[RMDB]
RNA sequence: GGGAACGACUCGAGUAGAGUCGAAAAGCUACCCAGCGCACGAUGAGACUGCCGUGACGUCUAGCCUGCGUCUCAACUAGUCUCCAUCAAUCAAAACGCUGGGAUUGAUGUACGAGACUAGUACACAGUCUAAGCACUUGUUCGCAGGUGUUUAGACAAAAGAAACAACAACAACAAC
Reactivity to DMS in 0.01 (KOAc 150mM, MgCl2 10mM, bicine 150mM(pH8.5), 24C), signal-to-noise 9, nucleotides 027 to 126: g010c090u020a080c000c000c000a110g010c040g020c050a060c060g000a080u020g010a070g010a060c020u020g020c070c070g010u010g010a090c060g010u010c040u010a110g010c050c050u010g000c030g010u000c020u010c070a130a060c030u000a000g000u000c000u010c010c010a010u000c000a030a010u010c040a080a070a110a140c160g010c070u020g010g010g000a010u000u000g010a020u000g010u040a100c210g000a030g010a030c020u000a020g000u010a080c200a100c240a130
Reactivity to 2A3 in 0.01 (KOAc 150mM, MgCl2 10mM, bicine 150mM(pH8.5), 24C), signal-to-noise 9, nucleotides 027 to 126: g030c020u070a100c000c000c000a010g010c020g000c020a040c050g050a040u100g010a010g020a030c020u080g030c040c040g040u050g040a080c030g040u040c060u060a040g020c000c020u020g000c010g030u000c010u010c030a020a040c010u020a000g000u000c000u000c020c000a000u000c000a000a020u020c020a010a060a090a120c120g040c120u130g060g040g000a000u000u020g000a000u000g020u070a070c080g000a010g010a030c020u010a010g010u040a010c070a000c010a030